[RMDB]
RNA sequence: GGGAACGACUCGAGUAGAGUCGAAAAGAAGAGAAGUGAGUAAACGCCUAUGCGGUAUAAGCACAGCCCGUCAAAAGGCGUGCGGCGAGGGCACCUGAAGCUGUGCUUAUAACUGGGCCGUCGAAGACAUGGACGCGGUAUUCGUACCGCGUCCAUGAAAAGAAACAACAACAACAAC
Reactivity to DMS in 0.01 (KOAc 150mM, MgCl2 10mM, bicine 150mM(pH8.5), 24C), signal-to-noise 3, nucleotides 027 to 126: g010a060a060g000a060g000a070a030g020u050g030a060g020u000a030a070a040c100g000c010c010u000a040u020g030c160g020g040u000a030u000a010a010g000c010a020c000a000g000c010c120c080g000u030c220a080a060a150a100g010g020c160g030u010g000c020g010g010c040g000a100g000g000g030c020a060c020c010u010g020a180a110g000c020u010g010u000g000c010u010u010a010u000a030a100c040u000g000g000g010c010c040g000u020c040g020a050a110g020a140
Reactivity to 2A3 in 0.01 (KOAc 150mM, MgCl2 10mM, bicine 150mM(pH8.5), 24C), signal-to-noise 4, nucleotides 027 to 126: g110a060a010g120a010g020a140a000g050u100g090a020g000u100a080a110a050c010g020c000c010u080a080u160g050c070g050g020u060a000u000a010a000g010c000a000c010a010g000c020c020c040g090u100c050a100a070a000a080g090g000c090g010u020g010c020g030g060c110g050a140g020g080g000c010a020c010c010u050g060a040a010g000c000u010g000u000g000c000u010u010a020u010a010a040c040u060g020g020g020c080c010g040u040c020g020a120a030g060a030